The data come from the RNA Mapping Database (RMDB), library OK2TRN. Structure probing data (2A3 and DMS) for a 177-nucleotide construct. The DMS profile rests on 16,312 reads. The RNA was probed in 150 mM KOAc, 10 mM MgCl2 and 150 mM bicine (pH 8.5) at 24 C.
[RMDB]
RNA sequence: GGGAACGACUCGAGUAGAGUCGAAAAUGCUGCAUACAUUGAAAGUUUUGGUUAUGAUGACAUACACUGGGAGAUUGAAAGAUUCGCUGCAUAUUGGGCAAAUUUAAAAGGAGUCAAGAAUGUAUUGUAUAAUAGUGCAUUUCGAUGCACUAUUAUAAAAAGAAACAACAACAACAAC
Reactivity to 2A3 in 0.01 (KOAc 150mM, MgCl2 10mM, bicine 150mM(pH8.5), 24C), signal-to-noise 4, nucleotides 027 to 126: u030g010c010u030g030c030a010u050a100c020a040u040u100g060a090a080a040g050u050u050u130u120g070g000u040u050a100u130g080a040u090g010a010c010a050u090a030c030a020c090u030g010g030g000a050g030a090u030u120g050a100a060a000g050a050u050u060c040g000c040u030g020c020a030u030a100u110u070g000g000g000c020a040a060a100u110u210u090a080a130a010a040g070g010a020g010u020c020a020a020g060a060a040u080g030u090a080u060u170g050
Reactivity to DMS in 0.01 (KOAc 150mM, MgCl2 10mM, bicine 150mM(pH8.5), 24C), signal-to-noise 9, nucleotides 027 to 126: u010g010c050u000g000c050a060u010a080c070a060u000u000g000a080a090a080g010u000u000u000u010g010g010u010u010a060u000g010a120u000g000a070c070a050u000a070c100a070c070u010g010g000g000a070g010a100u000u000g010a070a090a080g000a060u000u000c070g010c050u000g010c060a070u000a100u000u000g010g000g000c040a030a050a080u010u000u010a050a050a090a090g000g000a080g010u000c040a050a080g010a060a040u010g010u000a060u010u010g010